[RMDB]
RNA sequence: GGGAACGACUCGAGUAGAGUCGAAAAGGCGGCCUGGGCGCAGGGCUACACAGGGCACGGCAUUGUGGUCUCCAUUCUGGACGAUGGCAUCGAGAAGAACCACCCGGACUUGGCAGGCAAUUAUGUGUCCAUUCACGGAAUUCGUUCCGUGAAUGGAAAAAGAAACAACAACAACAAC
Reactivity to 2A3 in 0.01 (KOAc 150mM, MgCl2 10mM, bicine 150mM(pH8.5), 24C), signal-to-noise 1, nucleotides 027 to 126: g040g010c000g020g020c010c030u050g010g040g000c070g000c040a070g000g020g000c050u070a020c080a000c010a040g020g000g000c050a000c030g050g000c050a010u020u150g060u040g080g060u010c010u010c020c000a040u060u000c070u110g030g040a030c050g090a140u090g060g000c040a080u050c080g060a040g060a230a030g020a040a020c010c000a010c000c020c010g030g000a030c040u010u080g010g020c040a040g060g000c000a010a060u180u070a100u190g150u020g050
Reactivity to DMS in 0.01 (KOAc 150mM, MgCl2 10mM, bicine 150mM(pH8.5), 24C), signal-to-noise 3, nucleotides 027 to 126: g010g010c050g020g000c070c030u000g010g000g020c030g020c070a090g000g010g010c070u000a060c100a070c140a110g020g000g020c030a090c050g010g010c100a060u000u000g020u000g010g020u000c030u000c050c050a060u000u000c060u010g000g000a100c110g010a100u000g000g000c040a210u000c040g000a100g020a050a090g010a050a120c040c000a060c060c070c030g020g000a070c110u000u000g030g010c080a050g000g010c030a030a070u000u010a110u000g080u010g000